Notes: The data come from the RNA Mapping Database (RMDB), library VIROID. Chemical mapping of a 177-nucleotide RNA with DMS. Reactivities are given for positions 27 through 126. DMS adducts were read by reverse transcription with MarathonRT. For DMS, 1,761 sequencing reads were counted.
RNA sequence: GGGAACGACUCGAGUAGAGUCGAAAACGUCUUCCUCGGUCAACCUCCGGAGUUCCUCUUCUUCCUCCCUGCUGAGGCUCUUCCCUCCUCCGGCUAGCUGCUUCUUCUUGUUCUCGAGGGACUUCCUAGUUAUCUUUGUGUUCGCACAAAGAUAACUAAAAGAAACAACAACAACAAC
Reactivity to DMS in 0.01 (KOAc 150mM, MgCl2 10mM, bicine 150mM(pH8.5), 24C), signal-to-noise 2, nucleotides 027 to 126: c100g000u010c060u000u010c050c000u000c040g010g010u000c050a050a220c090c060u010c040c030g030g010a090g020u000u010c030c010u010c060u010u000c030u010u000c020c020u010c010c030c050u000g000c060u000g000a140g000g000c080u000c050u000u000c030c000c000u000c040c020u010c020c040g000g020c090u010a090g010c040u000g020c070u000u000c030u000u020c030u000u000g000u000u020c030u000c010g000a030g000g000g000a190c210u000u000c020c010u000